[RMDB]
RNA sequence: GGGAACGACUCGAGUAGAGUCGAAAACACUUGCUGAGAACGGCCUCCUUACACUUGCGGGGAAGCAGCAUCCUUACAGCACUGCAGCUGCACCAGCAGAAGGAGCGGUUCCCCACGCAGCACCAGCGCACUUCAACGAAUUCGUUCGUUGAAGUGCAAAAGAAACAACAACAACAAC
Reactivity to 2A3 in 0.01 (KOAc 150mM, MgCl2 10mM, bicine 150mM(pH8.5), 24C), signal-to-noise 2, nucleotides 027 to 126: c040a020c030u070u190g000c030u020g050a040g030a170a020c020g130g000c000c050u040c000c020u060u100a060c110a000c150u120u200g010c030g000g010g010g010a070a050g000c020a000g050c020a110u120c030c020u170u220a120c060a050g040c090a080c170u180g040c060a070g000c010u000g020c010a060c010c030a020g000c000a000g000a060a010g020g020a020g000c010g070g000u000u010c000c020c000c000a030c070g000c000a000g000c000a030c040c010a030g080c050
Reactivity to DMS in 0.01 (KOAc 150mM, MgCl2 10mM, bicine 150mM(pH8.5), 24C), signal-to-noise 1, nucleotides 027 to 126: c110a120c090u010u000g020c010u000g000a030g030a050a050c020g010g010c100c070u000c000c000u000u010a000c060a300c150u000u000g010c060g000g000g000g000a130a060g070c010a030g020c050a070u000c010c050u000u000a080c120a060g040c010a050c130u020g000c060a130g000c010u000g010c000a090c100c040a100g040c010a050g020a030a070g030g000a020g010c000g000g020u000u000c000c010c000c060a060c050g020c040a050g000c060a100c080c030a050g000c130